An RNA of 207 nucleotides, treated with 2A3 and read out base by base. It was measured as part of the RMDB library RNAMAK. The RNA was probed in 150 mM KOAc, 10 mM MgCl2 and 150 mM bicine (pH 8.5) at 24 C. For 2A3 the reverse transcriptase was SuperScript II with manganese. Values are in units of 0.01, from 0 to 300, in steps of 10.
RNA sequence: GGGAACGACUCGAGUAGAGUCGAAAAGGGGUCUAUGAAAGCACUUGGAUUUACUUAGCUUUUGACGGUCUGAAGCCUCCACGGACCGAUAAGCUAAGUUGUCAGUGCUUCAUAGACGGAGGCACCCAAAAGCCAUGUUCGUUCGCGAACAUGGCAAGUUGUAUGAUUGCUUCGGCAAUCAUACAACAAAAGAAACAACAACAACAAC
Reactivity to 2A3 in 0.01 (KOAc 150mM, MgCl2 10mM, bicine 150mM(pH8.5), 24C), signal-to-noise 2, nucleotides 027 to 156: g090g010g040g000u020c010u000a010u010g080a160a060a050g000c050a010c060u170u250g130g020a090u300u180u160a030c010u040u010a000g010c030u100u040u080u210g250a160c050g010g000u000c020u040g050a080a070g030c010c000u030c040c000a050c000g000g000a000c000c010g060a080u050a090a010g000c000u000a000a000g010u010u020g020u030c020a000g000u000g010c000u000u000c000a010u000a010g000a000c000g000g010a010g000g000c010a030c000c000c000a010a120a040a000g000c000c010a000u010g000u000u000c010g000u030u070c260g020c010g100a010a010c000a000u000g000g020c000a010a000